[RMDB]
RNA sequence: GGGAACGACUCGAGUAGAGUCGAAAAACUUGCCCCUUUGCUAAGGGUGAUAGCUGUUCUUCUAAUUGCAAACAUUCAGUUGCUCAGUUGGUUAGUUACCUUUCUGAACGCUGUAAUGUUAUUGCUGCCGCAUGCACCUUCGGGUGCAUGAAAAGAAACAACAACAACAAC
Reactivity to 2A3 in 0.01 (KOAc 150mM, MgCl2 10mM, bicine 150mM(pH8.5), 24C), signal-to-noise 9, nucleotides 027 to 129: a000c070u060u120g040c010c000c000c000u030u040u170g060c050u090a030a030g060g020g010u090g070a080u090a060g030c060u050g060u080u010c020u110u010c030u070a100a090u180u100g000c000a010a010a030c000a010u000u010c000a010g030u120u170g270c000u000c000a010g000u030u020g020g000u020u070a050g040u080u180a080c010c000u080u160u110c000u010g020a020a010c000g000c000u030g070u280a010a010u000g010u010u050a060u050u060g000c010u020g050c020c030g040
Reactivity to DMS in 0.01 (KOAc 150mM, MgCl2 10mM, bicine 150mM(pH8.5), 24C), signal-to-noise 2, nucleotides 027 to 129: a140c100u050u030g040c070c000c010c040u010u050u030g020c150u070a060a090g000g030g060u010g000a090u030a070g030c000u000g050u010u000c060u030u040c080u050a100a090u060u040g000c000a040a050a090c020a070u030u000c030a030g000u020u040g100c050u010c020a040g010u000u000g010g020u020u030a170g030u010u000a090c010c000u020u010u040c010u000g000a030a030c000g020c010u000g040u000a010a010u010g000u040u020a070u000u000g010c010u040g030c130c110g030
The record gives the reactivity of an RNA of 170 nucleotides to 2A3 and DMS. The RNA was probed in 150 mM KOAc, 10 mM MgCl2 and 150 mM bicine (pH 8.5) at 24 C.